Conditions: 150 mM KOAc, 10 mM MgCl2 and 150 mM bicine (pH 8.5), 24 C. The record gives the reactivity of an RNA of 177 nucleotides to DMS. The DMS profile rests on 616 reads. The data come from the RNA Mapping Database (RMDB), library OK2TRN.
[RMDB]
RNA sequence: GGGAACGACUCGAGUAGAGUCGAAAAUUUUGCAUAAUGAAUUAACUAGAAUAAACUUAACAAAGAGAACUUAAGCUAAGUCCCCCGAAACCAGACGAGCUACCUAUGAACAAUCUAUCGGGAUCAAAUAUGCUUCUGAAUUCGUUCAGAAGCAUAUAAAAGAAACAACAACAACAAC
Reactivity to DMS in 0.01 (KOAc 150mM, MgCl2 10mM, bicine 150mM(pH8.5), 24C), signal-to-noise 1, nucleotides 027 to 126: u000u000u000u010g010c040a080u000a080a050u000g000a160a100u000u000a080a100c030u000a100g000a090a100u000a130a140a090c080u010u000a030a180c040a050a110a060g000a150g000a090a150c030u000u000a010a090g000c020u010a040a180g000u000c010c060c020c020c010g000a070a090a040c060c060a060g010a070c080g010a100g010c030u000a010c060c020u000a050u000g000a070a150c030a020a010u010c030u000a070u010c080g020g050g000a100u000c110a010a050